[RMDB]
RNA sequence: GGGAACGACUCGAGUAGAGUCGAAAAUACUUGGAAAGGUGUUAGGUGUUAUAGGUGAAGCCAAAGAAUGUUUGGUGGACAACAUCAAUGACUUCAGCACUAACAUUACUAACAGAACCAUUGAUGGUACCGACUGAAAUUUCGAUUUCAGUCGGUAAAAAGAAACAACAACAACAAC
Reactivity to DMS in 0.01 (KOAc 150mM, MgCl2 10mM, bicine 150mM(pH8.5), 24C), signal-to-noise 4, nucleotides 027 to 126: u010a110c060u000u000g010g000a120a130a100g030g020u000g010u010u000a010g020g020u000g010u000u000a050u010a280g010g020u000g010a010a020g020c010c000a000a080a300g000a060a040u000g000u000u000u000g030g030u000g000g010a220c070a010a020c020a020u000c010a050a220u010g000a010c010u000u000c010a030g000c010a150c300u000a000a010c010a010u010u000a130c010u000a020a020c030a070g010a060a190c030c020a080u000u000g010a090u010g010g010
Reactivity to 2A3 in 0.01 (KOAc 150mM, MgCl2 10mM, bicine 150mM(pH8.5), 24C), signal-to-noise 2, nucleotides 027 to 126: u060a010c030u030u050g030g050a250a080a040g110g000u030g010u040u030a020g000g050u000g010u030u080a080u080a090g110g060u030g020a010a000g010c000c000a000a020a010g090a050a080u050g080u070u060u070g130g000u090g130g100a030c010a040a010c000a030u020c000a010a060u020g030a030c000u000u000c010a030g040c010a020c040u000a020a000c000a010u050u170a070c010u000a030a000c000a040g060a110a070c010c000a050u030u120g140a130u090g010g090
The data come from the RNA Mapping Database (RMDB), library OK2TST. This 177-nucleotide RNA was probed chemically with DMS and 2A3. For 2A3 the reverse transcriptase was SuperScript II with manganese. The reactions ran in a buffer of 150 mM KOAc, 10 mM MgCl2 and 150 mM bicine (pH 8.5), at 24 C. The 2A3 profile rests on 2,040 reads.